[RMDB]
RNA sequence: GGGAACGACUCGAGUAGAGUCGAAAAACGACAAUUGAGAAGUAAUGCACAGAAUAACAUAAUACGAUGUUCUGAAAUUAAUUUCUCAGAAGCCUGACCAACGCAUUACCUUCUGCUUAACUGAUCAACCAGCAUACGCCUUCGGGCGUAUGCUGGUAAAAGAAACAACAACAACAAC
Reactivity to 2A3 in 0.01 (KOAc 150mM, MgCl2 10mM, bicine 150mM(pH8.5), 24C), signal-to-noise 1, nucleotides 027 to 126: a000c190g040a150c270a150a100u000u240g020a000g000a050a000g000u050a000a000u100g000c090a000c000a030g000a050a050u170a190a170c000a190u300a290a000u070a120c000g140a120u000g000u000u000c000u000g000a150a000a000u000u000a000a120u000u000u010c020u000c000a000g030a010a000g050c000c000u000g000a020c040c090a000a000c190g000c000a000u070u070a090c000c000u000u140c210u000g060c000u020u150a050a070c040u210g000a130u170c050a000
The record gives the reactivity of an RNA of 177 nucleotides to 2A3. For 2A3, 302 sequencing reads were counted. The RNA was probed in 150 mM KOAc, 10 mM MgCl2 and 150 mM bicine (pH 8.5) at 24 C.